[RMDB]
This 177-nucleotide RNA was probed chemically with 2A3 and DMS. Values are in units of 0.01, from 0 to 300, in steps of 10. DMS adducts were read by reverse transcription with MarathonRT. The reactions ran in a buffer of 150 mM KOAc, 10 mM MgCl2 and 150 mM bicine (pH 8.5), at 24 C.
RNA sequence: GGGAACGACUCGAGUAGAGUCGAAAACAUGCAUACGUGUGCACCCACGCACGCUCACCCUGGCGCGUCUGACUCGUGGCCCUCUCUGCAGGUGGCAGUGCUGGCAGCACGGUGGCGGUGGCCGUGAAUAUUACGCCACGUUCGCGUGGCGUAAUAUAAAAGAAACAACAACAACAAC
Reactivity to 2A3 in 0.01 (KOAc 150mM, MgCl2 10mM, bicine 150mM(pH8.5), 24C), signal-to-noise 2, nucleotides 027 to 126: c040a050u170g050c010a060u090a190c110g060u100g010u000g080c030a040c050c010c000a020c060g050c000a000c010g070c000u080c010a060c000c000c010u030g070g020c000g020c020g060u020c050u040g130a130c050u040c070g030u060g070g000c030c000c000u030c000u030c040u090g000c050a020g050g120u060g100g030c020a020g030u010g000c000u020g040g010c030a010g000c010a000c050g060g060u020g030g000c060g000g070u010g050g000c020c000g020u000g040a020
Reactivity to DMS in 0.01 (KOAc 150mM, MgCl2 10mM, bicine 150mM(pH8.5), 24C), signal-to-noise 2, nucleotides 027 to 126: c110a130u000g010c040a080u010a060c120g010u000g000u010g010c060a120c090c030c010a130c220g000c010a030c020g000c040u020c070a090c070c030c050u000g030g020c030g020c070g000u000c050u000g030a130c040u010c110g020u000g000g020c000c010c050u000c040u000c060u010g010c050a050g020g020u010g000g010c060a060g020u020g020c030u000g010g000c030a080g000c020a020c020g020g010u000g010g010c090g010g020u000g010g000c100c000g000u000g000a120